[RMDB]
RNA sequence: GGGAACGACUCGAGUAGAGUCGAAAAAGUGAGUAUGGCUCGUUACGUCGAGCCAUACUCACAACGGUUUUCCUAAAUCGUCGUGAGACGGACCUUGGAAAACCUAGUAUUUAAAUAACUAGGUCAAAUUAGCCUAGAUCCUUCGGGAUCUAGGCAAUCCACUGAUUGUGUUCGCACAAUCAGUGGAAAAAGAAACAACAACAACAAC
Reactivity to 2A3 in 0.01 (KOAc 150mM, MgCl2 10mM, bicine 150mM(pH8.5), 24C), signal-to-noise 2, nucleotides 027 to 156: a010g000u000g010a010g010u000a000u000g030g000c020u000c010g050u150u140a120c160g070u090c000g060a000g000c000c000a000u000a000c000u000c000a000c000a000a000c010g000g010u000u000u000u010c010c000u010a020a010a000u040c000g000u000c000g040u040g150a120g000a050c010g000g000a010c000c010u000u000g010g000a010a000a010a000c000c000u000a000g020u030a030u090u090u140a090a210a130u090a050a000c070u020a000g000g020u010c020a040a030a120u110u130a050g000c000c010u010a000g000a010u010c010c040u010u090c180g140g000g000a000u000c000u010a000g000g000c000a000a000